[RMDB]
RNA sequence: GGGAACGACUCGAGUAGAGUCGAAAAUAACAAUGAACCAUUCCCAUGAGUGUUGCCUGGCAAUAUUUGUGGGGAUUUUUUGAUUAUUGUUAGCAUUUUUCUAGACAAGAACAACUGAAAAAAGAGUUGUUUCCUAUGUCUUCGGACAUAGGAAACAAAAAGAAACAACAACAACAAC
Reactivity to 2A3 in 0.01 (KOAc 150mM, MgCl2 10mM, bicine 150mM(pH8.5), 24C), signal-to-noise 1, nucleotides 027 to 126: u110a040a010c000a000a020u080g040a020a020c060c030a000u000u000c030c000c010a000u000g000a000g010u000g010u000u000g000c040c170u180g200g010c000a000a000u000a000u000u020u060g000u000g020g010g000g000a000u040u010u000u020u050u100g120a040u000u060a000u000u010g010u000u000a010g010c050a070u050u020u000u000u230c080u080a080g010a130c030a100a040g040a100a020c000a030a050c030u150g130a070a050a000a030a080a000g060a040g100u000

This 177-nucleotide RNA was probed chemically with 2A3. Source: RMDB library RFM100, as collected in RNAgym. The RNA was probed in 150 mM KOAc, 10 mM MgCl2 and 150 mM bicine (pH 8.5) at 24 C. 2A3 adducts were read by reverse transcription with SuperScript II with manganese. The 2A3 profile rests on 624 reads.